Structure probing data (2A3 and DMS) for a 177-nucleotide construct.
For 2A3, 1,914 sequencing reads were counted.
For DMS, 2,426 sequencing reads were counted.
The reactions ran in a buffer of 150 mM KOAc, 10 mM MgCl2 and 150 mM bicine (pH 8.5), at 24 C.
RNA sequence: GGGAACGACUCGAGUAGAGUCGAAAAACCUGCUCUUAAUUAACCUCUCCUUCACCUGACUAACUCCUGCCUCCCCGAUCUGUUCCUUUCAGCAGAAACUAACGGCUUGUGGAUUUCUUUCUGACUACUAGCAAAUAAGCUUCGGCUUAUUUGCUAGAAAAGAAACAACAACAACAAC
Reactivity to 2A3 in 0.01 (KOAc 150mM, MgCl2 10mM, bicine 150mM(pH8.5), 24C), signal-to-noise 4, nucleotides 027 to 126: a000c010c010u020g010c010u020c010u110u210a220a180u130u140a120a100c000c000u020c000u040c020c000u050u050c040a010c020c000u030g060a080c040u050a060a000c040u020c010c010u020g010c000c000u050c010c000c020c000g020a030u000c030u060g010u010u120c010c000u030u070u070c030a040g060c010a000g040a070a090a010c030u060a080a000c050g090g010c000u040u040g040u050g060g060a130u030u040u020c040u000u040u020c040u020g080a090c020u030a030
Reactivity to DMS in 0.01 (KOAc 150mM, MgCl2 10mM, bicine 150mM(pH8.5), 24C), signal-to-noise 2, nucleotides 027 to 126: a130c030c000u000g000c040u000c030u000u040a050a040u000u010a200a140c050c000u000c010u010c020c010u000u010c100a060c030c000u030g010a130c070u040a110a080c040u010c060c000u000g000c010c020u010c010c020c000c010g040a030u000c040u010g030u000u000c040c010u000u020u000c130a060g020c130a050g010a060a030a060c080u020a060a080c090g020g000c090u000u000g010u030g020g010a170u000u010u000c010u010u010u010c060u010g010a160c100u020a220